Chemical mapping of a 177-nucleotide RNA with DMS and 2A3.
RNA sequence: GGGAACGACUCGAGUAGAGUCGAAAACGUUACUUGUUCGUCGUAUUCUGUUCAGACCAGAUUUCCAUGUCGAUCUGGCCUUGCAGUUCCGGGUAAUCGGCGGCGUGGAAGGUGGGAACCUGCCCCAUACCCGAAAAUUAUUCGUAAUUUUCGGGUAAAAAGAAACAACAACAACAAC
Reactivity to DMS in 0.01 (KOAc 150mM, MgCl2 10mM, bicine 150mM(pH8.5), 24C), signal-to-noise 6, nucleotides 027 to 126: c060g000u010u000a070c070u000u000g010u000u000c100g010u010c020g010u010a120u010u000c010u000g010u010u010c300a030g010a040c010c000a010g000a030u000u000u010c020c040a030u000g010u010c050g000a020u000c010u000g010g000c030c010u000u000g020c040a040g020u000u000c040c020g020g000g010u010a100a110u010c080g010g000c060g010g000c040g030u000g000g000a090a070g010g010u010g000g010g000a130a080c050c050u000g000c030c000c010c050a260
Reactivity to 2A3 in 0.01 (KOAc 150mM, MgCl2 10mM, bicine 150mM(pH8.5), 24C), signal-to-noise 4, nucleotides 027 to 126: c000g040u070u070a050c030u120u120g120u280u130c030g020u000c010g020u060a170u090u030c010u020g050u060u090c060a000g010a040c000c000a020g000a060u030u020u030c030c050a060u090g060u090c010g010a030u000c010u010g010g010c010c010u000u030g010c010a020g010u060u030c030c000g000g000g040u110a140a150u110c040g020g010c020g020g000c020g030u020g020g030a050a030g010g040u120g050g000g000a050a080c000c020u030g040c020c010c000c010a010